[RMDB]
RNA sequence: GGGAACGACUCGAGUAGAGUCGAAAACUGAGCUCCAACAGCUCUUCAAAGGGAAGGUAUGUGUGGGCCAAGUGGGAGUGCAGUAGGAAGGGAAUGAAAGGAGGAGCCAGGAUGGUCCCACUGCCCACUGCAUGCUUCACGGGCUCCCCUACAAGCCAUACGGCACACUAUUCGUAGUGUGCCGUAUAAAAGAAACAACAACAACAAC
Reactivity to 2A3 in 0.01 (KOAc 150mM, MgCl2 10mM, bicine 150mM(pH8.5), 24C), signal-to-noise 2, nucleotides 027 to 156: c060u020g000a030g010c010u130c130c030a100a130c030a080g030c040u030c060u130u150c190a200a140a080g030g000g030a020a040g000g020u000a010u010g050u000g010u020g000g020g000c110c130a050a050g020u010g010g000g010a020g010u090g020c000a030g030u150a050g040g030a040a060g090g000g050a100a140u100g050a150a250a060g060g040a060g020g000a000g030c020c000a010g050g050a080u080g080g000u020c000c020c000a000c030u090g000c000c000c000a000c000u020g000c000a000u010g000c010u080u070c060a050c130g000g000g000c020u010c010c060c000c000u010a060c050a110a010g000c010c000